[RMDB]
RNA sequence: GGGAACGACUCGAGUAGAGUCGAAAACUCGGCUUCCGCCCACAGCGCGCCCGGCAGCAGGAUGUCCGCGUAGCGGUUGGUCUCGGUGUCGAGAAACGCGUCCUGCACGAUCACCACGUCGGCCGCAAUGGGUAAUAUGGUUCGCCAUAUUACCCAUAAAAGAAACAACAACAACAAC
Reactivity to 2A3 in 0.01 (KOAc 150mM, MgCl2 10mM, bicine 150mM(pH8.5), 24C), signal-to-noise 5, nucleotides 027 to 126: c010u000c020g030g000c030u120u040c020c010g040c030c020c010a090c040a030g030c010g000c000g020c040c020c000g010g000c020a050g010c000a010g040g010a040u030g070u090c030c020g000c070g070u080a040g010c010g020g060u070u120g080g050u030c020u020c030g110g080u250g210u290c020g000a010g030a020a040a010c050g000c000g020u010c000c010u020g000c020a010c070g070a110u180c050a020c120c010a040c080g010u010c000g000g010c000c010g000c020a010
Reactivity to DMS in 0.01 (KOAc 150mM, MgCl2 10mM, bicine 150mM(pH8.5), 24C), signal-to-noise 6, nucleotides 027 to 126: c040u010c030g010g010c040u000u000c050c040g020c090c040c070a110c190a110g010c050g010c120g000c160c020c040g010g010c050a160g000c020a040g000g000a050u000g020u010c070c030g010c040g020u000a080g010c020g010g010u010u000g010g010u000c010u000c020g020g010u010g020u000c010g000a030g010a030a070a120c110g010c030g010u000c010c000u000g010c020a130c100g020a100u020c110a110c110c070a110c130g020u000c010g010g010c040c010g020c070a140
This 177-nucleotide RNA was probed chemically with 2A3 and DMS. The 2A3 profile rests on 8,480 reads. Reactivities are given for positions 27 through 126. 2A3 adducts were read by reverse transcription with SuperScript II with manganese. Conditions: 150 mM KOAc, 10 mM MgCl2 and 150 mM bicine (pH 8.5), 24 C.